Source information: Source: RMDB library OK3TST, as collected in RNAgym. An RNA of 207 nucleotides, treated with 2A3 and DMS and read out base by base. The RNA was probed in 150 mM KOAc, 10 mM MgCl2 and 150 mM bicine (pH 8.5) at 24 C. For 2A3, 3,929 sequencing reads were counted. For 2A3 the reverse transcriptase was SuperScript II with manganese.
RNA sequence: GGGAACGACUCGAGUAGAGUCGAAAACGCAGAUGGAGGCAAGCUGUCCUUCUUUGACCACGUGUCUAUCUGUGCCCUGGGUCGUCGGCGCGGCACCACGGCAGUCUACGGUACAGACCUUGCGUGGGUCCUGAAGCACUUUAGUGACCUGGAACCGUCACGAGAUUACAUUCGUGUAAUCUCGUGAAAAAGAAACAACAACAACAAC
Reactivity to 2A3 in 0.01 (KOAc 150mM, MgCl2 10mM, bicine 150mM(pH8.5), 24C), signal-to-noise 5, nucleotides 027 to 156: c030g020c010a010g010a050u060g020g010a010g020g020c050a060a110g050c100u130g060u190c020c010u040u060c000u100u080u150g030a040c020c010a080c110g090u140g030u060c030u020a060u000c000u000g030u020g050c010c000c010u050g020g000g000u020c030g010u030c080g010g050c060g030c060g110g030c070a040c020c020a030c010g050g000c010a040g060u000c030u040a040c080g060g020u050a040c020a020g000a030c010c040u100u140g020c010g010u020g000g010g050u020c010c030u070g030a080a010g040c050a030c090u080u090u130a070g010u040g050a040c000c010u020g030g040a060a040c050c020g020
Reactivity to DMS in 0.01 (KOAc 150mM, MgCl2 10mM, bicine 150mM(pH8.5), 24C), signal-to-noise 3, nucleotides 027 to 156: c050g000c050a030g010a060u010g050g010a100g050g000c010a090a140g010c070u000g000u040c040c080u000u000c060u010u010u000g010a080c010c010a040c050g060u000g010u000c030u000a090u010c000u000g020u000g010c000c000c000u000g040g020g030u000c010g000u000c050g020g020c050g090c030g070g040c120a140c020c040a070c050g020g000c030a050g000u000c020u000a060c070g030g000u000a300c060a040g010a010c030c010u000u000g050c020g040u010g010g030g010u000c010c000u010g020a110a110g030c070a060c060u010u000u000a110g010u010g000a090c060c010u020g000g000a050a080c050c030g020